The record gives the reactivity of an RNA of 177 nucleotides to 2A3 and DMS.

[RMDB]
RNA sequence: GGGAACGACUCGAGUAGAGUCGAAAAUGGAGCUGUAGGAGUCUAAAUUGGGGACGCAGAUGUUUGGGACGUCACCUUGCAGUGUUAACUUGGCUCUCAUGAACCUCUUUGAUCUUCCACAAGGGGUACAGUGGAGAUAAUUCGUUAUCUCCACUGUAAAAGAAACAACAACAACAAC
Reactivity to 2A3 in 0.01 (KOAc 150mM, MgCl2 10mM, bicine 150mM(pH8.5), 24C), signal-to-noise 9, nucleotides 027 to 126: u090g010g010a010g010c020u040g050u180a020g010g060a050g040u050c050u110a090a150a120u150u130g020g020g010g010a000c010g010c030a020g060a240u170g150u170u170u170g140g030g040a090c010g020u020c010a120c060c000u010u040g010c050a040g020u030g080u190u070a050a040c010u010u030g010g000c000u000c000u000c020a020u070g030a020a040c000c000u010c030u050u020u070g060a080u040c090u120u030c040c010a030c020a060a030g010g000g000g000u010
Reactivity to DMS in 0.01 (KOAc 150mM, MgCl2 10mM, bicine 150mM(pH8.5), 24C), signal-to-noise 8, nucleotides 027 to 126: u010g000g000a030g020c010u010g010u020a040g010g010a160g010u000c030u010a040a130a120u020u010g000g020g010g020a030c040g010c100a140g010a130u030g000u010u040u020g010g010g010a160c040g010u010c030a050c020c010u010u010g010c180a070g010u020g010u020u020a060a170c040u000u000g000g000c000u000c000u020c090a040u020g010a100a060c020c000u000c000u010u010u000g020a070u020c110u010u000c000c030a120c080a030a030g000g000g010g010u000

2A3 adducts were read by reverse transcription with SuperScript II with manganese. The data come from the RNA Mapping Database (RMDB), libraries RFM100 and RFMREP.